[RMDB]
RNA sequence: GGGAACGACUCGAGUAGAGUCGAAAACUCUCUGGUAUUUGUUGAAUCAGUGAAUAAAUCAAUGAGUAUGGUUAGAUCCUCAAACUUGUCCUAUUUGAAUCCUUGAGGGAGAUUUAAAAUACAGAGCAGAACACAUGUUUUUCGAAACAUGUGUUCUAAAAGAAACAACAACAACAAC
Reactivity to 2A3 in 0.01 (KOAc 150mM, MgCl2 10mM, bicine 150mM(pH8.5), 24C), signal-to-noise 2, nucleotides 027 to 126: c010u050c000u000c000u030g000g080u060a020u030u040u040g050u050u120g010a030a030u070c080a080g100u070g280a120a100u150a210a130a030u050c040a000a040u060g040a010g060u080a020u060g030g020u030u030a060g040a160u070c010c000u000c040a080a090a090c070u010u050g100u040c000c000u060a110u080u050u040g030a040a030u000c020c020u060u070g060a090g050g110g010a090g010a050u020u060u110a050a040a010a000u050a000c040a010g030a000g000c030
Reactivity to DMS in 0.01 (KOAc 150mM, MgCl2 10mM, bicine 150mM(pH8.5), 24C), signal-to-noise 2, nucleotides 027 to 126: c070u010c020u000c000u000g020g010u010a010u000u000u000g010u010u020g010a020a070u010c060a140g010u020g000a090a080u020a090a060a100u000c030a030a080u000g010a090g010u010a050u000g000g010u000u000a070g010a160u010c030c000u010c070a040a050a080c090u000u000g000u010c040c050u000a120u000u000u010g000a060a080u000c040c030u000u000g030a090g000g000g000a100g000a020u000u000u000a020a030a050a060u010a040c050a020g000a020g010c300